An RNA of 170 nucleotides, treated with 2A3 and DMS and read out base by base. Reactivities are rounded to 0.1 and cut off at 0 and 3. The 2A3 profile rests on 12,430 reads. It was measured as part of the RMDB library 15KLIB. The RNA was probed in 150 mM KOAc, 10 mM MgCl2 and 150 mM bicine (pH 8.5) at 24 C. DMS adducts were read by reverse transcription with MarathonRT.

RNA sequence: GGGAACGACUCGAGUAGAGUCGAAAAGCGAUCCAACAACUGUAUACUGGGUUCCAGGGAAAGCAAAUCCUUGGCAGUACCAUGUUGGAAGAUGAAUUCACACCUGAGGAUGUUAAUAUGCAGAUUAUGACAGGACUGUUCGCAGUCCUGAAAAGAAACAACAACAACAAC
Reactivity to 2A3 in 0.01 (KOAc 150mM, MgCl2 10mM, bicine 150mM(pH8.5), 24C), signal-to-noise 7, nucleotides 027 to 129: g030c040g010a010u000c000c000a000a000c020a040a050c050u060g040u120a090u030a090c020u010g080g000g110u220u070c010c020a000g000g000g000a060a090a030g190c160a080a040a070u020c000c000u000u000g000g000c000a020g000u000a020c010c020a030u060g000u020u010g050g000a000a000g020a020u150g040a030a110u120u060c060a030c000a000c090c030u030g020a030g050g040a050u040g000u080u020a060a020u090a070u180g020c040a010g030a110u060u100a080u280g060a040
Reactivity to DMS in 0.01 (KOAc 150mM, MgCl2 10mM, bicine 150mM(pH8.5), 24C), signal-to-noise 5, nucleotides 027 to 129: g010c090g030a090u030c010c020a020a170c010a070a080c170u000g020u030a180u020a020c000u010g010g000g040u070u070c030c020a030g070g000g000a030a070a120g020c180a100a110a110u010c010c010u010u020g000g000c060a020g010u020a060c300c040a040u040g020u040u030g000g000a030a030g010a000u000g000a090a050u040u030c090a090c070a130c090c030u000g020a000g000g000a000u030g000u040u020a020a010u030a060u000g030c060a060g000a100u060u030a050u040g020a200